The record gives the reactivity of an RNA of 177 nucleotides to DMS and 2A3.
The data come from the RNA Mapping Database (RMDB), library OK2TST.
Values cover nucleotides 27 to 126.
The RNA was probed in 150 mM KOAc, 10 mM MgCl2 and 150 mM bicine (pH 8.5) at 24 C.
For 2A3 the reverse transcriptase was SuperScript II with manganese.
[RMDB]
RNA sequence: GGGAACGACUCGAGUAGAGUCGAAAAUCAACCACAGCGGUUUGCAUCGCCACUCCGCUUAUAUUCUGCAAAACAGUGACUUGCCGGGUUUUAAUCAGGAACAGCAGCUGAUGAUGGCGACACUGGAUCGACGUGGUAAUUUCGAUUACCACGUCGAAAAAGAAACAACAACAACAAC
Reactivity to DMS in 0.01 (KOAc 150mM, MgCl2 10mM, bicine 150mM(pH8.5), 24C), signal-to-noise 2, nucleotides 027 to 126: u000c120a130a130c010c090a120c300a020g000c010g000g010u020u000u000g020c050a210u000c250g000c150c000a000c010u000c010c000g010c000u010u000a080u000a150u010u000c010u010g000c130a100a080a050a150c060a000g000u010g010a120c160u000u000g020c020c000g030g040g010u000u010u000u000a070a040u000c020a010g000g000a050a160c130a060g000c090a030g010c030u000g000a030u000g000a230u010g010g000c040g010a070c060a000c020u000g010g000a120
Reactivity to 2A3 in 0.01 (KOAc 150mM, MgCl2 10mM, bicine 150mM(pH8.5), 24C), signal-to-noise 2, nucleotides 027 to 126: u050c000a000a070c000c000a010c100a020g000c020g010g080u020u000u010g070c060a230u230c090g070c090c000a000c000u000c000c000g000c000u020u000a020u010a010u080u080c010u040g080c070a000a000a160a130c000a030g000u000g150a170c060u080u050g010c000c000g190g050g020u040u080u130u240a010a010u020c010a000g030g030a090a060c020a090g130c030a000g000c010u030g020a020u010g000a050u180g010g050c000g010a020c020a010c020u020g000g010a030